RNA sequence: GGGAACGACUCGAGUAGAGUCGAAAAGAUAUGGACGGGCCACGGGAGCUGGUGUCGGAAACGACAUGGCCAGCUUUGAUCGUGGCCGUCCUAAGUCAAAACCAUGAAAUGUUCGCAUUUCAUGGAAGAAUGUAAAUUUGUUCGCAAAUUUACAUUCAAAAGAAACAACAACAACAAC
Reactivity to 2A3 in 0.01 (KOAc 150mM, MgCl2 10mM, bicine 150mM(pH8.5), 24C), signal-to-noise 7, nucleotides 027 to 126: g020a020u060a030u140g010g010a010c110g080g300g190c010c010a010c010g040g030g040a020g010c020u010g000g070u190g010u090c010g020g030a100a070a030c020g020a010c020a070u120g300g020c010c000a010g000c000u080u090u140g140a120u080c000g000u000g000g000c000c000g000u000c000c000u000a000a000g000u000c000a000a000a120a210c010c000a000u000g000a010a010a000u050g000u090u140c300g000c210a010u000u000u010c000a010u010g010g000a010a040
Reactivity to DMS in 0.01 (KOAc 150mM, MgCl2 10mM, bicine 150mM(pH8.5), 24C), signal-to-noise 9, nucleotides 027 to 126: g000a040u000a300u000g000g000a010c010g030g030g020c000c000a010c000g010g000g010a020g030c000u000g020g030u000g010u000c000g020g000a090a070a220c010g010a010c010a160u010g100g010c030c000a010g010c000u000u000u010g000a110u000c010g020u000g000g010c000c000g000u000c000c000u000a010a090g010u010c040a120a120a130a250c000c000a000u000g000a000a010a000u000g010u010u010c290g020c010a010u000u000u000c000a000u000g010g010a050a050

Overview:
Chemical mapping of a 177-nucleotide RNA with 2A3 and DMS. For DMS, 23,309 sequencing reads were counted. Conditions: 150 mM KOAc, 10 mM MgCl2 and 150 mM bicine (pH 8.5), 24 C. It was measured as part of the RMDB library TTRDES. 2A3 adducts were read by reverse transcription with SuperScript II with manganese.